[RMDB]
RNA sequence: GGGAACGACUCGAGUAGAGUCGAAAAGUUCACAGGUAUUUCAGUUGAUGCUCUAGCAAUCAAGUUUUCACAAUAUGAUCCAGAGACAAACGACGAUGGCUCUAUGAAACUUGAUGACGUACCAGAAGUCGGUGAGGGUUCAAACUAUGAUCGUAUCUGGUAGUGGUUAUUUCGAUAACCACUACCAAAAAGAAACAACAACAACAAC
Reactivity to 2A3 in 0.01 (KOAc 150mM, MgCl2 10mM, bicine 150mM(pH8.5), 24C), signal-to-noise 2, nucleotides 027 to 156: g040u090u080c060a010c030a010g000g090u050a030u020u100u080c040a020g030u040u040g030a080u090g010c000u000c010u170a050g040c040a000a060u010c000a020a000g010u000u000u070u120c060a080c040a060a040u100a170u300g050a010u000c000c010a020g040a010g010a200c130a130a270a000c070g200a020c000g010a010u040g000g000c010u000c000u060a050u090g000a000a000a020c010u010u000g000a010u000g010a020c000g030u030a030c020c000a000g020a100a020g120u080c120g000g050u030g030a060g000g000g020u080u040c050a000a060a080c060u050a070u150g050a070u050c050g010u050a030u050c010
Reactivity to DMS in 0.01 (KOAc 150mM, MgCl2 10mM, bicine 150mM(pH8.5), 24C), signal-to-noise 1, nucleotides 027 to 156: g000u000u000c000a020c070a080g020g030u010a070u000u000u000c000a140g000u040u010g010a130u000g010c060u010c030u000a090g000c050a080a030u000c000a000a080g020u000u000u020u000c010a100c020a090a200u000a150u010g020a060u000c040c030a060g000a300g000a120c090a070a090a210c170g070a200c020g040a180u000g020g030c040u000c030u000a040u060g010a000a020a020c010u000u010g000a060u000g040a070c060g010u010a010c040c040a100g040a120a140g040u000c030g010g050u000g010a090g010g000g020u000u000c020a050a000a160c040u000a060u000g000a070u000c030g020u010a150u010c000